The record gives the reactivity of an RNA of 177 nucleotides to DMS and 2A3. The RNA was probed in 150 mM KOAc, 10 mM MgCl2 and 150 mM bicine (pH 8.5) at 24 C. For 2A3 the reverse transcriptase was SuperScript II with manganese. The data come from the RNA Mapping Database (RMDB), libraries RFM100 and RFMREP.

RNA sequence: GGGAACGACUCGAGUAGAGUCGAAAACGCCGAAGGCAGGAGCGGGGGACCCAAGGUAAGUGCCGCACCGGGCAGUUGAGCCGGAGCGGCUAGGGGUGGAGCCGAGUUCCGCGAGGAACCCGGCCGGUGGAUACGUAACAUUCGUGUUACGUAUCCAAAAAGAAACAACAACAACAAC
Reactivity to DMS in 0.01 (KOAc 150mM, MgCl2 10mM, bicine 150mM(pH8.5), 24C), signal-to-noise 6, nucleotides 027 to 126: c130g000c050c020g020a130a080g020g030c050a080g000g000a080g020c090g010g000g000g000g000a070c050c030c040a110a090g000g000u010a090a080g020u010g010c000c000g020c010a100c010c000g010g000g000c060a100g000u010u010g000a260g010c000c000g000g000a040g020c000g000g000c000u000a010g000g000g000g020u020g000g010a160g030c000c000g000a040g000u000u000c010c000g000c300g000a180g000g010a010a020c000c010c010g010g020c000c030g000g000
Reactivity to 2A3 in 0.01 (KOAc 150mM, MgCl2 10mM, bicine 150mM(pH8.5), 24C), signal-to-noise 4, nucleotides 027 to 126: c050g020c030c010g060a060a040g030g020c080a030g020g030a040g050c060g010g010g010g010g040a040c000c020c040a020a010g060g010u100a030a120g060u050g090c010c010g000c000a020c000c000g030g070g000c080a150g020u100u110g070a020g050c000c000g000g000a020g000c000g000g000c000u010a000g000g010g010g010u080g030g030a020g000c000c000g000a000g000u000u000c010c000g000c020g010a060g000g000a000a000c000c000c000g010g010c000c010g020g030